[RMDB]
RNA sequence: GGGAACGACUCGAGUAGAGUCGAAAACAACGCCAGAAGAAGCCACCGCGGCUGCGGUAAUAAAGUGGGUGUGGACAUGGUCGGGAUGGCCGUACCCCCCGUGGGGAUCAUAUGUCACCACGACGUAGCAUAGCUACGGUUUCGACCGUAGCUAUGCAAAAGAAACAACAACAACAAC
Reactivity to DMS in 0.01 (KOAc 150mM, MgCl2 10mM, bicine 150mM(pH8.5), 24C), signal-to-noise 3, nucleotides 027 to 126: c060a130a100c120g020c050c020a070g020a140a140g010a120a170g010c060c010a090c050c090g000c060g020g020c080u000g000c030g000g020u000a070a080u010a030a080a110g020u010g000g000g000u000g010u000g000g010a060c090a040u000g010g000u000c050g020g000g000a160u000g000g020c030c030g030u000a110c000c000c000c010c020c030g010u010g000g000g000g030a020u000c160a130u030a110u020g000u010c000a040c010c010a030c040g010a100c120g010u000a110
Background: The record gives the reactivity of an RNA of 177 nucleotides to DMS. The RNA was probed in 150 mM KOAc, 10 mM MgCl2 and 150 mM bicine (pH 8.5) at 24 C. DMS adducts were read by reverse transcription with MarathonRT. The data come from the RNA Mapping Database (RMDB), library OK2TST. Values cover nucleotides 27 to 126.